[RMDB]
RNA sequence: GGGAACGACUCGAGUAGAGUCGAAAAGAAACCGGCUUCUGCGGCUACGGCGACGCGUGCAAGUUUGUGCACGACCGGUCAGACUACAAGUCUGGGUGGGAACUGGACAAGGAAUGGGAUGCCAGGGCGUGUUAUGUUCUUUCGAGAACAUAACACGAAAAGAAACAACAACAACAAC
Reactivity to DMS in 0.01 (KOAc 150mM, MgCl2 10mM, bicine 150mM(pH8.5), 24C), signal-to-noise 3, nucleotides 027 to 126: g000a060a180a110c060c030g000g000c050u000u000c070u000g010c090g010g010c010u000a070c090g020g000c020g030a050c060g010c030g020u000g000c010a050a160g020u000u010u010g000u000g010c010a040c000g000a120c040c040g000g010u000c060a020g010a020c000u000a120c280a110a170g010u000c010u010g000g010g000u020g000g000g000a080a130c070u000g010g000a050c080a060a110g000g010a080a060u010g000g000g020a150u010g000c010c020a030g010g000g010
Reactivity to 2A3 in 0.01 (KOAc 150mM, MgCl2 10mM, bicine 150mM(pH8.5), 24C), signal-to-noise 2, nucleotides 027 to 126: g040a070a030a000c010c020g020g000c030u090u000c030u150g060c030g080g000c020u030a050c100g050g000c020g050a060c040g020c010g020u030g000c010a040a100g060u190u260u220g120u120g010c000a000c000g030a020c000c030g020g140u050c020a000g020a040c000u230a110c100a210a010g010u010c000u010g040g040g170u150g000g020g000a030a040c030u010g000g020a050c060a070a140g030g030a110a070u080g010g000g020a020u090g020c040c020a040g000g040g040